[RMDB]
RNA sequence: GGGAACGACUCGAGUAGAGUCGAAAAGUGGAGGCGAAAGUCACCCUCCUCGCAUCGCAAGUUCGUGCUUGCGACUUACACGUAGGGCGAGGGGUGGGCGAAAGUUGCCAUGAGACCGUAACUUUCUAUGAGGCGGGACUGUUCGCAGUCCCGCCAAGCAUACUUGCAUGUUCGCAUGCAAGUAUGCAAAAGAAACAACAACAACAAC
Reactivity to 2A3 in 0.01 (KOAc 150mM, MgCl2 10mM, bicine 150mM(pH8.5), 24C), signal-to-noise 2, nucleotides 027 to 156: g090u050g010g010a010g030g000c050g120a090a070a030g030u070c040a180c020c010c000u080c030c000u010c010g020c000a020u030c000g000c010a000a000g020u300u260c160g190u300g060c010u020u040g000c000g000a000c000u020u120a050c150a010c100g150u170a120g000g080g020c020g010a040g050g000g020g020u170g040g060g000c060g010a090a000a000g020u030u040g040c020c010a000u030g000a020g070a080c010c030g000u010a030a020c010u000u070u030c030u060a120u130g050a030g020g010c010g000g000g000a000c000u000g050u090u110c220g030c050a000g010u000c010c000c000g020c000c000a000a000

The record gives the reactivity of an RNA of 207 nucleotides to 2A3. For 2A3 the reverse transcriptase was SuperScript II with manganese. The reactions ran in a buffer of 150 mM KOAc, 10 mM MgCl2 and 150 mM bicine (pH 8.5), at 24 C.